[RMDB]
RNA sequence: GGGAACGACUCGAGUAGAGUCGAAAAUAGUCGGAAUUCGUUCCGACUAGAUGAACGCUGCAAGCGGCACCGCGCUCAAAAGAGCACGCAAAAGCAACGCAAAAAUGAACUUAUUCGUAAGUUCAAAGACCAUAGUGAAUUUCGAUUCACUAUGGUCAAAAGAAACAACAACAACAAC
Reactivity to 2A3 in 0.01 (KOAc 150mM, MgCl2 10mM, bicine 150mM(pH8.5), 24C), signal-to-noise 4, nucleotides 027 to 126: u010a000g000u010c010g010g030a030a030u090u010c190g040u100u000c010c000g000a000c010u000a010g000a010u110g060a100a040c040g010c050u080g040c100a120a130g030c000g060g000c030a020c060c040g030c010g000c010u020c020a200a300a100a090g010a000g000c040a010c020g040c010a080a080a000a080g030c020a020a040c070g010c090a080a110a020a000a040u040g000a010a010c000u000u010a010u070u060c190g050u040a010a000g000u000u000c010a040a000a010
Reactivity to DMS in 0.01 (KOAc 150mM, MgCl2 10mM, bicine 150mM(pH8.5), 24C), signal-to-noise 3, nucleotides 027 to 126: u000a000g010u000c000g010g010a030a020u000u000c160g010u000u000c010c000g000a010c000u000a020g020a120u000g010a140a090c080g010c040u000g000c060a080a220g010c040g000g010c080a120c240c060g000c040g010c010u010c020a080a070a130a160g000a020g000c000a030c060g000c100a030a040a110a140g000c020a030a060c060g000c150a010a080a050a070a070u000g010a020a010c000u000u000a030u000u000c170g020u000a000a010g010u000u000c010a050a080a110